[RMDB]
RNA sequence: GGGAACGACUCGAGUAGAGUCGAAAAUGCUGGGGAUGCACUACCGCGCCGCCAAACUUCUCGAUGCCUCCGAAGUCGGGGGUGUAGCCCUCGUCAUAGUUGUAGUAGCCGCUGCCGAAGAACACGAGGGAGCAAUAAUAUUCGUAUUAUUGCUCCCAAAAGAAACAACAACAACAAC
Reactivity to DMS in 0.01 (KOAc 150mM, MgCl2 10mM, bicine 150mM(pH8.5), 24C), signal-to-noise 4, nucleotides 027 to 126: u000g010c040u000g000g010g000g020a100u000g010c060a060c070u000a070c080c040g010c110g010c010c030g020c040c060a040a090a120c070u010u010c040u000c050g000a090u010g010c020c010u000c020c020g010a180a150g020u010c020g020g000g020g010g020u000g010u010a100g020c020c010c000u000c040g000u000c060a090u010a070g000u010u000g000u000a070g000u000a120g000c020c020g020c020u000g020c020c010g010a060a090g000a070a060c090a060c110g010a210
Reactivity to 2A3 in 0.01 (KOAc 150mM, MgCl2 10mM, bicine 150mM(pH8.5), 24C), signal-to-noise 1, nucleotides 027 to 126: u080g000c010u040g010g000g050g040a070u110g000c040a000c030u050a050c050c000g000c050g020c030c000g000c020c010a090a090a030c040u070u070c070u060c010g070a050u130g020c010c000u030c020c000g040a160a030g140u160c020g000g000g000g000g030u020g080u030a030g020c020c000c000u000c000g000u000c010a060u060a160g080u060u130g040u050a070g010u040a010g010c020c010g050c020u000g000c000c040g050a040a030g020a100a020c040a010c060g020a130
This 177-nucleotide RNA was probed chemically with DMS and 2A3. For 2A3, 1,386 sequencing reads were counted. Conditions: 150 mM KOAc, 10 mM MgCl2 and 150 mM bicine (pH 8.5), 24 C. For 2A3 the reverse transcriptase was SuperScript II with manganese.